[RMDB]
RNA sequence: GGGAACGACUCGAGUAGAGUCGAAAAAAAAGAUAUGGAUCUGCUACCCACCUCAACCACGUCUUGGACCACUUAUCGGAAACGAUAAGUGCUAGACGGAGUUGAGAGGCAGAUCCUAAGUCAAAAACAUGUCGACAUAGUUCGCUAUGUCGACAUGAAAAGAAACAACAACAACAAC
Reactivity to DMS in 0.01 (KOAc 150mM, MgCl2 10mM, bicine 150mM(pH8.5), 24C), signal-to-noise 2, nucleotides 027 to 126: a000a080a160a140g010a080u000a140u000g000g070a020u000c000u000g050c000u000a210c000c020c040a300c020c000u000c000a000a070c000c260a240c020g000u000c020u000u010g010g020a160c300c020a000c000u000u000a020u000c000g030g000a100a080a110c020g010a010u000a000a000g000u010g010c000u000a000g000a020c020g000g000a240g000u000u000g010a000g000a140g000g000c000a010g010a020u050c000c000u000a010a090g000u000c150a060a050a070a110a090